[RMDB]
RNA sequence: GGGAACGACUCGAGUAGAGUCGAAAAAGGAAGCCAAGCGCGGUGUAGAAGAGAGCUGCAAACAUGGAGCGUGCUGCUGGGCCCUGGGGCACCCUCAUGUAGACCCAUCCGCGCGCCUCGGCACGUGACCACAUCAUCUGUUCGCAGAUGAUGUGGUAAAAGAAACAACAACAACAAC
Reactivity to DMS in 0.01 (KOAc 150mM, MgCl2 10mM, bicine 150mM(pH8.5), 24C), signal-to-noise 2, nucleotides 027 to 126: a050g000g020a100a030g010c030c020a090a150g020c030g030c030g000g030u000g020u010a070g030a040a070g010a070g020a140g050c040u000g030c080a110a090a040c130a060u000g000g000a070g030c200g000u000g000c010u000g020c080u000g010g030g010c080c020c030u000g030g000g010g020c040a030c040c010c030u000c030a030u010g000u000a080g000a100c030c040c030a100u020c040c010g000c060g000c020g030c070c040u010c170g020g020c020a030c160g000u010g000
Reactivity to 2A3 in 0.01 (KOAc 150mM, MgCl2 10mM, bicine 150mM(pH8.5), 24C), signal-to-noise 1, nucleotides 027 to 126: a000g050g010a070a000g070c030c000a010a060g010c020g000c000g000g000u050g010u090a040g020a190a040g100a010g010a010g080c040u090g000c070a090a130a040c050a070u100g080g020a020g000c030g000u000g010c000u010g050c000u020g000g040g000c000c040c000u050g000g000g000g000c030a020c060c000c010u030c010a080u040g020u020a020g060a160c000c020c000a010u030c040c050g000c010g000c000g000c050c030u030c060g000g010c010a000c060g090u080g070
The record gives the reactivity of an RNA of 177 nucleotides to DMS and 2A3.
The RNA was probed in 150 mM KOAc, 10 mM MgCl2 and 150 mM bicine (pH 8.5) at 24 C.
It was measured as part of the RMDB library OK2TRN.
DMS adducts were read by reverse transcription with MarathonRT.
Reactivities are given for positions 27 through 126.
The DMS profile rests on 1,452 reads.